[RMDB]
RNA sequence: GGGAACGACUCGAGUAGAGUCGAAAAAACCCAUACCAUGGGAACUGCUGGGUCCCUCGGAUGUCGAUCCCCUCUCCCGUUCGGGAAAAGGGGGACUCCGGGACUCCCUGCAGGCUGGGCACGAAGCGAAGAGUACUCUUCGGAGUACUCAAAAGAAACAACAACAACAAC
Reactivity to DMS in 0.01 (KOAc 150mM, MgCl2 10mM, bicine 150mM(pH8.5), 24C), signal-to-noise 8, nucleotides 027 to 129: a040a020c000c020c020a020u020a090c120c060a090u000g030g030g020a120a100c040u010g030c050u000g020g060g000u000c110c050c000u010c030g000g000a050u070g040u000c050g020a140u050c040c010c000c010u020c090u010c000c000c000g030u050u090c220g000g000g000a010a030a080a060g040g060g020g000g010a010c000u000c010c020g000g000g000a030c190u020c020c030c020u000g030c020a030g000g000c080u000g000g000g000c080a030c080g020a090a050g050c100g030a100a070
Reactivity to 2A3 in 0.01 (KOAc 150mM, MgCl2 10mM, bicine 150mM(pH8.5), 24C), signal-to-noise 9, nucleotides 027 to 129: a000a010c030c000c010a030u100a040c040c030a060u110g040g010g020a080a070c020u010g010c020u050g000g000g000u020c030c010c000u000c020g000g010a070u220g020u010c030g070a200u180c010c000c000c000u000c010u020c010c000c010g130u260u300c230g010g000g000a020a030a010a010g010g000g000g010g000a000c000u000c000c000g000g000g000a000c020u020c000c000c000u010g010c000a010g010g010c010u040g000g010g020c060a030c130g060a070a030g060c040g050a100a030
Record summary
This 170-nucleotide RNA was probed chemically with DMS and 2A3. The RNA was probed in 150 mM KOAc, 10 mM MgCl2 and 150 mM bicine (pH 8.5) at 24 C.